[RMDB]
RNA sequence: GGGAACGACUCGAGUAGAGUCGAAAAAUGUUGCAAGAGAUGAUGUGAAGCUUAGCGUUAACUUUUAGCGUGGGUACGUUGCCUAUGGCGGUUCUAGGGGUCAUGCUAUGCAAGACUACAAACACGUAAAAAGCGGUGCAAGAAGCGGAUCUGGCAACCUUGACAGUCUAUUCGUAGACUGUCAAGGAAAAGAAACAACAACAACAAC
Reactivity to 2A3 in 0.01 (KOAc 150mM, MgCl2 10mM, bicine 150mM(pH8.5), 24C), signal-to-noise 3, nucleotides 027 to 156: a000u100g010u030u020g030c090a130a010g050a020g010a130u120g000a060u070g050u040g050a030a000g000c020u010u080a030g010c020g080u100u130a130a140c050u030u060u040u110a060g030c010g000u030g000g000g020u040a030c070g050u010u050g020c000c010u050a030u050g010g000c000g000g060u120u030c110u080a100g000g020g030g010u000c020a020u050g000c000u030a020u070g000c010a060a030g030a180c010u030a020c060a000a210a030c030a000c080g050u070a060a090a000a020a000g000c040g030g040u040g000c030a080a050g060a050a000g080c030g000g030a000u000c010u030g060g000c020a030a000
Reactivity to DMS in 0.01 (KOAc 150mM, MgCl2 10mM, bicine 150mM(pH8.5), 24C), signal-to-noise 1, nucleotides 027 to 156: a130u000g000u000u030g060c020a170a170g000a220g000a120u010g000a150u030g000u000g000a260a180g040c020u000u010a120g000c060g010u010u010a070a050c110u000u000u000u020a150g000c060g090u010g000g010g020u020a070c090g030u000u020g030c030c050u000a030u010g000g030c060g020g040u000u030c030u000a080g040g030g030g010u000c010a140u000g010c000u000a060u000g030c070a060a120g020a110c010u000a160c030a090a020a060c010a020c060g090u010a070a050a100a040a040g020c020g000g040u010g010c030a060a160g010a020a110g020c010g010g010a080u000c000u010g020g020c090a040a090

Chemical mapping of a 207-nucleotide RNA with 2A3 and DMS. The RNA was probed in 150 mM KOAc, 10 mM MgCl2 and 150 mM bicine (pH 8.5) at 24 C. For DMS the reverse transcriptase was MarathonRT. It was measured as part of the RMDB library OK3TST. Reactivities are given for positions 27 through 156. 2A3 adducts were read by reverse transcription with SuperScript II with manganese.